An RNA of 207 nucleotides, treated with 2A3 and read out base by base. The RNA was probed in 150 mM KOAc, 10 mM MgCl2 and 150 mM bicine (pH 8.5) at 24 C.
RNA sequence: GGGAACGACUCGAGUAGAGUCGAAAAGCUCCAUCCUAAGCAAAGUGAUGGAAACCUAAUAGGGAUUGGGUAUUCCUACUGAUACGUAUUGCACGUGUAAUUGCUCUAUCCCUCCAGUUAGGGCAGGGAUCUCAGGUUAGUUUGAAUGCAGGACUGAGGACUGCUGAUAGUUCGCUAUCAGCAGUCCAAAAGAAACAACAACAACAAC
Reactivity to 2A3 in 0.01 (KOAc 150mM, MgCl2 10mM, bicine 150mM(pH8.5), 24C), signal-to-noise 1, nucleotides 027 to 156: g040c050u000c000c000a000u000c000c070u300a240a030g030c100a200a250a030g090u170g100a020u030g080g130a050a050a060c000c000u080a120a060u080a170g050g020g030a020u000u050g110g000g000u060a060u000u000c060c020u030a100c000u030g090a050u010a030c000g050u030a070u020u300g150c100a010c050g000u020g090u060a020a070u040u200g000c020u080c000u060a000u020c000c010c000u070c020c030a030g020u020u100a020g000g020g010c030a080g010g040g030a070u040c010u020c040a050g000g000u020u070a060g000u060u250u070g120a160a040u050g000c020a030g020g140a000c040u000g000a050